An RNA of 207 nucleotides, treated with DMS and 2A3 and read out base by base. Source: RMDB library OK3TST, as collected in RNAgym. The RNA was probed in 150 mM KOAc, 10 mM MgCl2 and 150 mM bicine (pH 8.5) at 24 C.
[RMDB]
RNA sequence: GGGAACGACUCGAGUAGAGUCGAAAAAGUUAAGGAUCUGUACGAUAUGAUUCAUAACGUCAUUGAUGAUGUGAGAGAGAAAUACUUCUUUACGGUAUCUAAUAUAGAUUUUAUGGAGUAUAUAUUCUUGACGCAUCUUAAUCCUUCUAGAAUUAGACAUUGAGGCUAACUUCGGUUAGCCUCAAUGAAAAGAAACAACAACAACAAC
Reactivity to DMS in 0.01 (KOAc 150mM, MgCl2 10mM, bicine 150mM(pH8.5), 24C), signal-to-noise 2, nucleotides 027 to 156: a080g010u010u000a060a000g000g030a020u000c050u000g010u020a130c140g030a220u010a070u080g030a050u000u010c030a170u010a120a020c010g010u000c020a080u000u030g010a140u010g020a070u010g030u010g020a300g020a240g000a040g000a110a140a100u010a090c010u000u000c060u000u000u010a140c150g030g000u000a020u020c010u000a120a180u010a210u000a030g010a060u000u000u040u000a030u010g000g000a030g030u010a030u010a110u010a260u020u000c020u000u000g020a300c060g030c010a040u010c000u000u000a050a100u000c010c010u010u000c050u000a090g010a050a110u000u000a130g000a130
Reactivity to 2A3 in 0.01 (KOAc 150mM, MgCl2 10mM, bicine 150mM(pH8.5), 24C), signal-to-noise 3, nucleotides 027 to 156: a020g010u030u010a040a050g020g010a020u020c050u130g100u180a090c070g050a080u060a030u300g050a040u010u050c030a050u060a050a000c030g030u050c060a110u000u190g040a060u050g010a000u030g090u050g000a140g020a010g000a000g000a070a020a020u000a000c000u010u020c010u010u210u050a070c110g030g020u060a020u040c000u020a020a190u210a210u030a210g040a040u080u090u030u040a110u160g010g000a010g010u010a010u020a000u000a010u090u000c000u000u040g000a010c000g000c000a000u000c010u000u030a040a050u030c010c000u030u070c040u020a170g090a300a180u200u000a040g000a010